[RMDB]
The record gives the reactivity of an RNA of 177 nucleotides to DMS and 2A3.
RNA sequence: GGGAACGACUCGAGUAGAGUCGAAAAAGAGUAUCUCGAUCAACACUCUCAUUGAGUUUGAAUGUCAGUGACAUUGGUUCUUAUGACUUUCCAACUAUUGCUGCAUGGACACUAGGAGAAACUAUAGGAUUACGUAUCCAUUCGUGGAUACGUAAUCAAAAGAAACAACAACAACAAC
Reactivity to DMS in 0.01 (KOAc 150mM, MgCl2 10mM, bicine 150mM(pH8.5), 24C), signal-to-noise 6, nucleotides 027 to 126: a080g010a100g020u010a040u030c000u000c040g010a150u010c040a040a080c150a040c010u000c010u010c160a150u030u020g010a020g000u000u000u010g010a040a040u000g000u030c010a060g010u010g010a050c090a220u010u010g010g000u040u000c050u010u010a100u030g000a060c140u000u010u020c020c010a050a070c110u010a060u020u010g010c050u000g000c020a030u020g000g010a110c090a070c050u020a060g010g000a050g000a120a050a040c050u020a090u030a100g010
Reactivity to 2A3 in 0.01 (KOAc 150mM, MgCl2 10mM, bicine 150mM(pH8.5), 24C), signal-to-noise 9, nucleotides 027 to 126: a010g100a010g020u080a090u040c040u030c040g060a100u070c020a020a050c010a000c060u020c000u020c030a120u030u210g030a010g020u010u020u040g080a060a020u040g030u030c020a020g040u010g060a010c020a080u090u210g120g010u200u030c010u060u260a190u110g030a050c000u010u030u000c010c020a020a010c020u050a050u060u120g020c030u030g010c020a040u060g040g020a020c010a020c070u060a060g050g040a040g040a040a060a010c050u060a050u140a180g150
It was measured as part of the RMDB library OK1LIB. Reactivities are rounded to 0.1 and cut off at 0 and 3. The RNA was probed in 150 mM KOAc, 10 mM MgCl2 and 150 mM bicine (pH 8.5) at 24 C.